[RMDB]
RNA sequence: GGGAACGACUCGAGUAGAGUCGAAAAAUGAUUCGUAGUGUAAGACGAUCGACAGUCAUCGCUUGCCAGCAGGACCACCAAAGGAUUACGCUUCGGUAACUACUCGAGAUCCCAAGCGAUAAAACAAUCUCGUAUCAGAUUUCGAUCUGAUACGAGAAAAAGAAACAACAACAACAAC
Reactivity to DMS in 0.01 (KOAc 150mM, MgCl2 10mM, bicine 150mM(pH8.5), 24C), signal-to-noise 2, nucleotides 027 to 126: a020u000g020a060u000u000c000g020u010a110g010u000g010u020a160a120g000a100c020g000a040u000c140g020a090c130a070g010u000c080a040u000c090g020c020u000u000g000c090c020a080g020c090a050g000g000a050c130c120a060c010c040a020a070a230g000g000a050u000u010a050c090g000c220u000u000c050g040g000u010a110a130c030u000a000c000u000c020g020a020g000a200u000c000c000c000a070a110g010c130g000a140u000a040a020a020a060c170a040a070
Reactivity to 2A3 in 0.01 (KOAc 150mM, MgCl2 10mM, bicine 150mM(pH8.5), 24C), signal-to-noise 2, nucleotides 027 to 126: a000u040g020a020u040u030c040g040u080a120g070u040g020u250a010a100g040a210c020g020a020u050c020g070a100c070a050g100u130c020a010u060c040g010c040u020u030g000c020c030a030g020c030a050g050g080a050c010c010a030c010c010a140a050a000g010g000a020u010u070a010c070g010c050u010u000c000g000g040u040a170a150c000u000a020c010u000c000g000a000g000a030u030c020c010c020a010a010g090c040g100a090u140a250a050a000a020c060a050a080